Source information:
The data come from the RNA Mapping Database (RMDB), library OK2TRN. Chemical mapping of a 177-nucleotide RNA with 2A3 and DMS. The RNA was probed in 150 mM KOAc, 10 mM MgCl2 and 150 mM bicine (pH 8.5) at 24 C. For 2A3 the reverse transcriptase was SuperScript II with manganese. For 2A3, 11,777 sequencing reads were counted.
RNA sequence: GGGAACGACUCGAGUAGAGUCGAAAACGACAGCGCUUCGCGCGCGACCUCGCAGUCCAUGCCAUCAAUAGUCGCGCAAUGCCGACGGAUUGCUCCAGCGGGCUCGGACCACAUCGCCGCGGGCACACUUUAAACCAUGUUUCGACAUGGUUUAAAGAAAAGAAACAACAACAACAAC
Reactivity to 2A3 in 0.01 (KOAc 150mM, MgCl2 10mM, bicine 150mM(pH8.5), 24C), signal-to-noise 7, nucleotides 027 to 126: c040g100a030c060a060g060c040g020c100u280u300c160g010c060g020c020g010c000g050a020c000c020u090c050g020c090a010g000u000c020c000a030u080g020c020c020a040u060c010a060a170u070a140g020u020c010g000c010g050c180a100a250u250g040c060c020g010a010c020g040g060a030u030u050g020c040u050c070c070a080g040c090g060g000g000c020u030c060g040g020a040c030c020a060c040a070u020c000g000c010c000g020c010g030g000g000c010a000c000a000
Reactivity to DMS in 0.01 (KOAc 150mM, MgCl2 10mM, bicine 150mM(pH8.5), 24C), signal-to-noise 7, nucleotides 027 to 126: c070g010a100c210a080g000c060g010c020u010u010c050g020c060g010c170g000c010g010a020c100c050u010c130g000c080a070g010u010c030c040a120u000g010c040c060a070u000c050a060a080u010a100g000u000c020g020c140g020c090a150a080u010g000c060c010g010a040c020g000g010a080u000u000g010c100u010c070c050a080g000c100g010g000g000c030u000c090g000g000a050c050c050a060c090a280u000c030g000c010c000g000c030g000g000g000c030a070c110a170